[RMDB]
RNA sequence: GGGAACGACUCGAGUAGAGUCGAAAACUCUUUCACGGUUACGUCUGUCUCUGGCAGAGCAGACGGUCAGGAGGAAGAGGUCACCAUCUUCACGAAGCCAAAGCCAAAUUCCGCCUUGUCCUGUAAAGACGUCCACCUAUUUCGAUAGGUGGACGUCAAAAGAAACAACAACAACAAC
Reactivity to 2A3 in 0.01 (KOAc 150mM, MgCl2 10mM, bicine 150mM(pH8.5), 24C), signal-to-noise 2, nucleotides 027 to 126: c010u010c000u010u010u050c090a050c130g010g020u060u290a030c000g010u000c000u010g150u100c000u000c000u030g200g080c110a040g000a020g000c020a000g000a000c000g000g000u000c000a110g020g020a080g020g000a060a000g000a040g030g060u030c000a020c030c000a040u040c020u020u110c090a040c050g020a030a020g020c010c000a040a060a070g010c000c020a040a040a020u060u000c010c030g000c000c000u010u030g030u040c000c000u080g060u110a000a060a000